[RMDB]
RNA sequence: GGGAACGACUCGAGUAGAGUCGAAAAGCACUGCAGGACUUUCGCCGUUGAGCGCGCCAUCGGUGGAUGAGGCCACCAAGAUCGCUGCCCGCAUAGAGGGCCCGCAUUGCGUGCGGAUCGGCGUUACAUAGUCUAGGUCUUUCGAGACCUAGACUAUAAAAGAAACAACAACAACAAC
Reactivity to DMS in 0.01 (KOAc 150mM, MgCl2 10mM, bicine 150mM(pH8.5), 24C), signal-to-noise 4, nucleotides 027 to 126: g000c070a090c020u010g010c070a070g010g010a130c050u000u010u000c020g010c010c020g010u000u010g010a200g000c030g010c070g000c030c170a090u000c150g000g010u000g010g010a110u010g010a230g000g000c030c010a060c010c020a100a080g000a100u010c100g030c030u000g030c070c010c020g020c140a180u010a150g010a160g010g000g020c010c080c090g010c090a070u010u000g010c080g000u000g020c000g000g000a060u010c040g010g020c010g030u000u010a060c160
Reactivity to 2A3 in 0.01 (KOAc 150mM, MgCl2 10mM, bicine 150mM(pH8.5), 24C), signal-to-noise 2, nucleotides 027 to 126: g020c020a000c110u110g000c050a070g000g100a070c040u080u090u030c050g000c000c000g060u040u080g060a030g000c000g010c010g000c060c010a080u140c060g000g010u040g030g020a090u170g090a090g150g050c010c010a010c000c000a020a010g070a070u140c030g000c020u030g000c000c020c010g090c040a070u130a150g190a130g020g000g000c010c000c020g000c010a040u030u160g020c020g020u000g000c000g020g060a010u010c020g010g000c000g000u020u040a060c040
Chemical mapping of a 177-nucleotide RNA with DMS and 2A3.
For 2A3, 2,433 sequencing reads were counted.
It was measured as part of the RMDB library OK2TST.
High DMS reactivity at an A or C suggests that its Watson-Crick edge is free.